[RMDB]
RNA sequence: GGGAACGACUCGAGUAGAGUCGAAAACCGGAAUGGUUCCGCCGUGAUCGGGCCAUGCAAUAGUUGCCAACGACAACUAUGCUCCGGUUGCUCAGGCAGCGUAACGCUGAUUGAAAGACCACAUGAAUUAGCGCGACAUUGUUCGCAAUGUCGCGAAUCGAUGAGGAGAGUUCGCUCUCCUCAUCGAAAAAGAAACAACAACAACAAC
Reactivity to DMS in 0.01 (KOAc 150mM, MgCl2 10mM, bicine 150mM(pH8.5), 24C), signal-to-noise 1, nucleotides 027 to 156: c000c000g010g030a120a030u010g000g020u010u000c010c000g060c070c090g030u020g030a020u010c010g000g000g000c020c020a070u010g030c120a130a060u000a010g010u010u000g020c000c000a120a280c290g000a120c000a000a030c000u010a000u000g020c030u000c040c060g040g030u000u000g020c050u000c000a070g000g010c030a060g010c010g050u000a120a100c130g020c000u000g000a080u000u000g000a100a170a100g090a080c010c000a050c090a120u010g000a100a160u030u000a050g000c000g010c000g060a040c000a050u000u010g020u000u000c250g000c050a040a000u000g010u000c000g030c000g000a030a000
Reactivity to 2A3 in 0.01 (KOAc 150mM, MgCl2 10mM, bicine 150mM(pH8.5), 24C), signal-to-noise 2, nucleotides 027 to 156: c020c060g000g010a030a060u070g000g000u260u300c000c030g000c070c080g150u200g050a240u090c020g000g000g010c010c010a010u040g060c000a000a300u000a000g000u000u000g040c100c050a160a060c160g000a130c010a000a000c010u000a000u010g020c010u000c000c010g000g000u020u000g000c010u000c010a010g080g000c000a000g020c000g070u190a130a040c160g000c000u000g010a020u000u070g010a110a000a010g040a020c000c000a050c040a190u240g030a140a110u170u090a080g070c000g000c000g020a000c000a000u000u000g010u100u060c190g000c070a000a000u000g000u010c000g000c000g000a000a000